[RMDB]
RNA sequence: GGGAACGACUCGAGUAGAGUCGAAAACUGGCUGGCGGGGUAGGGCGCGGCUGCUCCUCCUGAAAGCAGAGAGGACCCUGGUUGGCUGUGAGCAUGGUGGGCUGCCGUGUGAGUGGCAGGCAAGCAGCACUAGCUAUGUGUUCGCACAUAGCUAGUGAAAAGAAACAACAACAACAAC
Reactivity to DMS in 0.01 (KOAc 150mM, MgCl2 10mM, bicine 150mM(pH8.5), 24C), signal-to-noise 5, nucleotides 027 to 126: c070u000g010g000c050u000g010g010c070g010g000g000g000u010a080g000g020g020c040g020c050g010g010c040u010g020c070u000c020c010u000c020c020u000g000a140a130a160g010c040a040g000a150g020a060g000g000a070c080c030c030u000g000g000u010u000g010g020c030u010g000u000g000a120g010c050a080u010g010g020u000g010g000g010c040u000g010c020c020g010u000g010u010g010a130g010u000g010g010c020a030g010g010c060a070a130g010c070a090g000
Reactivity to 2A3 in 0.01 (KOAc 150mM, MgCl2 10mM, bicine 150mM(pH8.5), 24C), signal-to-noise 2, nucleotides 027 to 126: c010u010g040g020c030u020g030g030c030g020g030g020g020u080a060g050g020g020c030g000c030g040g000c020u030g010c020u040c000c000u020c000c010u060g130a260a110a030g080c040a010g110a000g000a000g040g030a040c020c000c030u050g040g100u100u070g060g000c030u040g040u070g060a010g030c040a060u090g020g010u050g040g060g000c020u040g000c000c000g040u040g000u020g050a120g010u080g040g000c020a000g010g010c010a000a030g040c020a020g040